The record gives the reactivity of an RNA of 207 nucleotides to 2A3.
RNA sequence: GGGAACGACUCGAGUAGAGUCGAAAACGAUCUGUUUUCAGAUCGAGCUACGUUUUCGUAGCGAUGGGUAGCGCUCCUCCCAGCUACCCUAUAUUUGAUAUAAAUGGACAUCCGCCGGUACCAGGGUGUCCGGGAGGAGGUAUAAUGGGUGCCGGAACGGCACGAUAGCCUUCGGGCUAUCGUGCCGAAAAGAAACAACAACAACAAC
Reactivity to 2A3 in 0.01 (KOAc 150mM, MgCl2 10mM, bicine 150mM(pH8.5), 24C), signal-to-noise 2, nucleotides 027 to 156: c040g000a010u000c000u040g080u180u200u250u290c010a000g000a000u000c020g000a000g000c000u000a000c010g090u020u030u070u300c000g000u020a000g010c030g000a110u090g010g010g000u000a000g000c000g000c020u020c010c000u000c010c000c000a000g000c000u000a000c010c000c000u000a010u000a010u010u120u070g050a030u010a040u040a250a160a140u180g000g000a000c000a000u000c000c020g060c000c010g040g000u010a010c000c050a030g010g000g010u000g000u000c000c010g000g020g000a000g030g050a010g000g060u260a130u060a300a060u140g100g000g000u000g000c000c000g000g010a040a020

It was measured as part of the RMDB library OK3TST.